RNA sequence: GGGAACGACUCGAGUAGAGUCGAAAAUAUAUAUCAGUUAGAGAGGUGUGUGGCCCAUCCCGCGGUAGGUAAGUCGUAUCAUACUCCUGUGAUAUGUUCUAAGUGUGCAGUCUGAGGAUGAUAUAUAGUGUAUUAAAAUAUUCGUAUUUUAAUACACAAAAGAAACAACAACAACAAC
Reactivity to DMS in 0.01 (KOAc 150mM, MgCl2 10mM, bicine 150mM(pH8.5), 24C), signal-to-noise 6, nucleotides 027 to 126: u020a040u010a020u010a030u010c020a050g000u010u020a060g000a110g010a090g000g020u010g030u010g010u010g010g000c040c040c050a100u010c020c020c010g000c080g010g020u010a020g000g000u000a060a090g000u010c040g020u000a040u010c020a030u010a060c080u020c050c100u000g010u000g000a060u020a010u010g000u010u020c050u010a060a120g010u020g010u000g010c060a040g000u010c030u000g000a060g000g000a070u000g000a050u000a040u020a050u010a090
Reactivity to 2A3 in 0.01 (KOAc 150mM, MgCl2 10mM, bicine 150mM(pH8.5), 24C), signal-to-noise 3, nucleotides 027 to 126: u090a000u030a010u020a030u030c050a050g120u110u170a060g010a000g000a010g110g010u030g000u010g010u020g060g010c000c000c010a040u030c000c010c000g030c030g020g020u070a030g010g030u070a020a020g040u030c010g010u030a020u030c000a000u020a080c020u020c010c020u030g010u000g050a020u040a030u100g080u050u020c030u060a040a070g060u040g020u020g050c000a000g010u000c010u040g040a030g060g010a040u020g010a010u020a000u010a010u030a060